[RMDB]
RNA sequence: GGGAACGACUCGAGUAGAGUCGAAAAGAUUACGUGUCGUUGCGGAAUCGAUACUACGCACGAGAUUCCAAGGUCUCUGUAGUACGUCCGCUGGUGACGUCUUUGGAGUCUCGUUCGACAUACGAAAGGUAUCUACAUGGUUCGCCAUGUAGAUACCAAAAGAAACAACAACAACAAC
Reactivity to DMS in 0.01 (KOAc 150mM, MgCl2 10mM, bicine 150mM(pH8.5), 24C), signal-to-noise 3, nucleotides 027 to 126: g010a080u020u000a050c110g030u000g000u000c090g000u000u040g010c000g010g000a040a180u030c030g000a150u010a100c080u010a100c040g020c090a030c030g000a040g010a000u010u000c000c000a000a040g000g000u020c080u020c070u000g000u020a130g000u050a020c010g020u000c010c010g020c210u040g000g010u030g000a020c000g010u000c000u020u030u000g000g000a040g010u000c020u000c010g000u000u000c000g000a150c200a080u010a080c100g010a070a080a070
Reactivity to 2A3 in 0.01 (KOAc 150mM, MgCl2 10mM, bicine 150mM(pH8.5), 24C), signal-to-noise 5, nucleotides 027 to 126: g040a030u110u190a040c060g000u020g010u050c050g050u080u100g020c020g050g030a040a020u080c030g000a010u040a100c090u020a020c020g000c010a000c010g000a000g010a000u010u000c010c000a010a010g050g010u070c050u010c080u220g170u160a090g070u110a070c030g020u000c020c030g040c140u100g060g070u160g030a020c030g020u000c000u030u000u000g000g000a010g000u000c010u000c000g000u020u010c010g020a030c010a040u170a050c050g080a120a020a020
Conditions: 150 mM KOAc, 10 mM MgCl2 and 150 mM bicine (pH 8.5), 24 C. The record gives the reactivity of an RNA of 177 nucleotides to DMS and 2A3. High 2A3 reactivity points to a flexible backbone, as in loops and unpaired stretches. For DMS, 6,101 sequencing reads were counted. For DMS the reverse transcriptase was MarathonRT.